[RMDB]
RNA sequence: GGGAACGACUCGAGUAGAGUCGAAAAGAAGAGAAGAAACGGCCCUUGGUAGGAAAGGCCGAACACGCGUGACCUACCAACACGCAAGGAGCAGGCUGGUAUUCCUGCAAAGAGAGAGUAGGAGAAACGACGAUUUUAUAUUCGUAUAAAAUCGUCGAAAAGAAACAACAACAACAAC
Reactivity to 2A3 in 0.01 (KOAc 150mM, MgCl2 10mM, bicine 150mM(pH8.5), 24C), signal-to-noise 7, nucleotides 027 to 126: g130a040a010g080a010g030a100a020g050a050a120a020c030g040g000c000c020c000u030u060g080g010u080a040g000g060a090a050a020g120g000c020c000g030a060a010c020a010c030g040c030g080u020g060a110c010c000u030a030c030c000a020a010c050a010c040g030c040a050a080g050g010a060g030c030a010g040g000c010u060g050g020u060a090u080u050c010c000u010g020c040a040a110a000g120a010g010a000g010a010g010u050a030g000g070a030g050a040a080a010
Reactivity to DMS in 0.01 (KOAc 150mM, MgCl2 10mM, bicine 150mM(pH8.5), 24C), signal-to-noise 6, nucleotides 027 to 126: g000a090a090g010a080g000a090a080g020a060a080a070c090g000g000c030c010c080u010u000g000g030u010a040g000g000a040a120a090g010g000c010c040g000a100a070c180a120c280g000c010g000u010g000a300c030c010u010a020c000c030a050a050c110a060c070g000c060a090a080g000g000a140g010c060a090g000g010c020u030g010g020u020a070u010u010c010c000u000g000c050a040a070a060g000a080g000a100g010a090g010u010a050g010g010a140g010a080a070a170
This 177-nucleotide RNA was probed chemically with 2A3 and DMS. For 2A3 the reverse transcriptase was SuperScript II with manganese. For 2A3, 13,390 sequencing reads were counted.